An RNA of 177 nucleotides, treated with 2A3 and DMS and read out base by base.
[RMDB]
RNA sequence: GGGAACGACUCGAGUAGAGUCGAAAAUGGGUUAUUUCCGCUCCUGCGGCCUGUAACGCCCUCAUCCUGAGCCGGUGCGCAGCACCGUGUCGAAGGACGAGGAGGGCGGGCUCAGGAUGAUGAGGGACACGAGUGCAUCAUUCGUGAUGCACUCGUGAAAAGAAACAACAACAACAAC
Reactivity to 2A3 in 0.01 (KOAc 150mM, MgCl2 10mM, bicine 150mM(pH8.5), 24C), signal-to-noise 2, nucleotides 027 to 126: u080g020g040g010u100u070a090u070u100u020c010c010g070c030u020c020c010u090g020c120g000g020c000c010u080g090u140a270a050c040g120c030c010c000u000c000a030u020c000c010u000g000a000g000c010c010g000g000u020g000c300g000c140a110g000c000a010c000c020g040u100g040u060c030g020a040a010g000g030a000c020g030a030g120g010a000g020g030g000c000g000g030g000c010u000c000a010g050g010a010u040g010a050u050g050a130g040g020g000a020
Reactivity to DMS in 0.01 (KOAc 150mM, MgCl2 10mM, bicine 150mM(pH8.5), 24C), signal-to-noise 2, nucleotides 027 to 126: u010g020g030g010u010u000a110u010u010u000c000c020g010c110u010c010c010u010g010c250g000g020c010c000u000g000u020a040a130c000g020c030c000c000u000c010a090u000c000c000u000g000a300g020c010c000g000g010u000g010c010g000c260a160g000c000a020c000c020g010u000g030u010c010g010a230a040g000g010a010c090g010a030g000g000a070g000g010g000c000g010g000g000c010u000c020a010g000g000a030u000g010a110u000g000a140g020g010g000a270
Source: RMDB library OK2TST, as collected in RNAgym.